[RMDB]
RNA sequence: GGGAACGACUCGAGUAGAGUCGAAAACUUGUGUGCUGGCAGGCUACUACUGGUAAGAAUGGCUAGUGUCAGCAGGGAUGGCUCCUCUCUGGGUUCCAUCUCACCAAGAUGAGUGGUGCAAAUCUGACCUUAUUAGACUCUUCGGAGUCUAAUAAGGAAAAGAAACAACAACAACAAC
Reactivity to DMS in 0.01 (KOAc 150mM, MgCl2 10mM, bicine 150mM(pH8.5), 24C), signal-to-noise 4, nucleotides 027 to 126: c080u000u000g010u010g030u000g020c010u000g010g020c020a050g000g000c010u000a050c080u010a140c070u000g010g020u010a080a050g020a120a170u000g000g010c020u010a090g040u000g020u000c010a010g010c000a100g000g000g000a020u000g000g010c100u010c010c010u000c220u010c170u020g020g000g010u000u010c010c000a000u010c020u000c010a110c090c050a040a080g010a110u010g000a080g030u000g000g000u000g010c110a040a090a080u000c020u000g000a300
Reactivity to 2A3 in 0.01 (KOAc 150mM, MgCl2 10mM, bicine 150mM(pH8.5), 24C), signal-to-noise 3, nucleotides 027 to 126: c020u050u060g050u020g020u020g110c000u010g000g000c010a020g020g020c000u010a040c030u020a060c030u090g140g110u230a060a060g080a120a050u120g020g000c010u050a080g260u030g010u020c010a000g000c000a000g000g000g010a010u010g000g000c000u000c000c020u040c040u000c080u130g020g000g010u040u020c010c000a020u010c020u010c030a020c010c010a010a050g090a200u150g060a040g130u050g050g030u060g000c060a030a010a150u030c030u020g060a050